[RMDB]
RNA sequence: GGGAACGACUCGAGUAGAGUCGAAAAGGUGGAGUUUGUAGAGACUGGCUGGCUGGCUGCAGACAUCUUCAUGAGAACAGCAGGUACCUUGGUGCAUGAUAACAGGCCAGGUUAUAUUCUCAUCCUCGCCCUCAUAAAGAUACAGGUCUACCGUCUCCUGUGAAAAUGGGUUCGCCCAUUUUCACAGAAAAGAAACAACAACAACAAC
Reactivity to 2A3 in 0.01 (KOAc 150mM, MgCl2 10mM, bicine 150mM(pH8.5), 24C), signal-to-noise 1, nucleotides 027 to 156: g000g010u020g050g040a080g000u020u050u050g050u060a030g010a030g020a090c030u070g020g050c000u030g070g020c020u050g010g020c000u020g000c020a010g020a140c010a010u010c000u050u010c040a010u020g020a020g000a050a030c020a080g000c000a030g040g000u040a030c010c000u060u100g020g000u060g150c100a110u030g040a150u110a180a070c030a050g000g090c000c000a000g030g000u010u040a050u010a040u200u030c150u020c060a160u030c000c020u040c010g000c000c000c040u010c000a030u050a040a110a010g010a010u050a080c030a010g040g050u000c010u000a000c000c000g020u010c000u000c000
Background
Chemical mapping of a 207-nucleotide RNA with 2A3. The reactions ran in a buffer of 150 mM KOAc, 10 mM MgCl2 and 150 mM bicine (pH 8.5), at 24 C. Reactivities are given for positions 27 through 156.